The record gives the reactivity of an RNA of 177 nucleotides to DMS and 2A3. The RNA was probed in 150 mM KOAc, 10 mM MgCl2 and 150 mM bicine (pH 8.5) at 24 C. 2A3 adducts were read by reverse transcription with SuperScript II with manganese.

RNA sequence: GGGAACGACUCGAGUAGAGUCGAAAAGAAAAAGUCGUCGAAAAUAGGUAGGAGUAUCGGAGAAAAGUCUCGAAAGAGACUGGAAUACGAUCCUCUCGCAACCUCGUACCUGGAAGACGACGAAAAAGGGUAAAUAAUGCUUCGGCAUUAUUUACCCAAAAGAAACAACAACAACAAC
Reactivity to DMS in 0.01 (KOAc 150mM, MgCl2 10mM, bicine 150mM(pH8.5), 24C), signal-to-noise 4, nucleotides 027 to 126: g030a030a060a080a160a160g010u010c000g020u000c000g020a150a070a050a130u080a010g000g010u000a070g020g000a020g020u000a070u000c050g000g000a060g000a060a210a100a030g010u000c010u000c000g000a090a060a100g020a000g010a010c000u000g000g000a300a220u020a040c080g010a070u010c060c030u010c000u000c130g020c210a130a120c080c030u020c020g020u000a020c010c010u000g000g030a150a080g010a020c020g030a000c000g000a000a040a010a040a060
Reactivity to 2A3 in 0.01 (KOAc 150mM, MgCl2 10mM, bicine 150mM(pH8.5), 24C), signal-to-noise 3, nucleotides 027 to 126: g100a010a110a010a000a000g020u000c020g000u020c030g060a100a010a050a180u150a080g020g000u010a030g000g030a000g000u010a010u080c020g010g040a020g230a030a050a030a020g000u000c000u000c000g020a060a040a030g000a010g000a010c000u000g000g030a080a020u080a060c010g030a020u000c010c000u010c000u010c010g030c080a030a080c000c040u050c030g130u020a030c000c000u000g020g000a000a040g010a000c020g000a000c000g010a030a000a000a010a000